The data come from the RNA Mapping Database (RMDB), library TTRDES. This 177-nucleotide RNA was probed chemically with DMS.

[RMDB]
RNA sequence: GGGAACGACUCGAGUAGAGUCGAAAAGAUAUGGAGGAAUUAUGGGAGUCUUUAAUCGGAAACGAUUAAGUGGACUUUGAUCAUACUGUUCCUCCUAAGUCAAAAGCCGGUUGUUCGCAACCGGCAAGUACUCAGAACUGUUCGCAGUUCUGAGUACAAAAGAAACAACAACAACAAC
Reactivity to DMS in 0.01 (KOAc 150mM, MgCl2 10mM, bicine 150mM(pH8.5), 24C), signal-to-noise 1, nucleotides 027 to 126: g000a000u000a030u000g020g000a010g000g000a020a010u010u000a000u000g000g000g040a000g010u000c000u000u000u000a000a000u000c000g020g000a040a020a030c000g000a030u000u000a000a010g040u020g010g010a000c010u020u010u020g000a030u000c000a020u000a050c250u030g010u000u000c020c000u000c000c000u000a000a120g000u000c010a120a140a300a300g000c010c000g040g030u010u000g050u010u020c200g020c000a000a010c010c000g010g000c020a000a040
The reactions ran in a buffer of 150 mM KOAc, 10 mM MgCl2 and 150 mM bicine (pH 8.5), at 24 C.